An RNA of 177 nucleotides, treated with DMS and 2A3 and read out base by base. DMS adducts were read by reverse transcription with MarathonRT. For DMS, 828 sequencing reads were counted. The reactions ran in a buffer of 150 mM KOAc, 10 mM MgCl2 and 150 mM bicine (pH 8.5), at 24 C. Values cover nucleotides 27 to 126.
RNA sequence: GGGAACGACUCGAGUAGAGUCGAAAAUGUGCCAAUAGGCCACCGCAAAGCGCAAAUGGUCUUCCAUGCGUUUGCCGAGCACGAUUUCAUCUGCAUUAUAAUGGCGGAAGGCCAGCGGAUUGUCGCACGAUACUCGCGUGUUCGCACGCGAGUAUCGAAAAGAAACAACAACAACAAC
Reactivity to DMS in 0.01 (KOAc 150mM, MgCl2 10mM, bicine 150mM(pH8.5), 24C), signal-to-noise 1, nucleotides 027 to 126: u010g000u000g050c020c000a210a120u020a100g040g000c000c050a180c050c040g040c050a040a180a100g030c080g000c040a030a020a220u000g010g000u000c020u000u000c000c000a090u080g020c040g000u020u000u000g010c190c110g000a040g010c000a010c170g000a140u000u050u020c210a110u000c030u000g000c000a050u000u000a040u000a010a060u000g010g010c010g080g000a030a020g000g010c000c000a040g000c060g020g010a090u010u000g060u000c020g030c080a300
Reactivity to 2A3 in 0.01 (KOAc 150mM, MgCl2 10mM, bicine 150mM(pH8.5), 24C), signal-to-noise 1, nucleotides 027 to 126: u030g040u080g000c000c000a000a180u050a220g000g000c010c000a030c010c010g000c070a110a050a030g000c030g000c050a040a070a160u080g000g000u000c000u020u000c000c010a030u290g060c050g000u000u000u050g000c010c020g060a010g000c010a030c170g080a110u180u150u100c100a100u000c010u000g000c030a040u000u060a160u200a210a090u070g110g020c000g000g010a090a000g000g000c030c000a010g000c000g000g010a000u000u150g090u140c030g000c060a000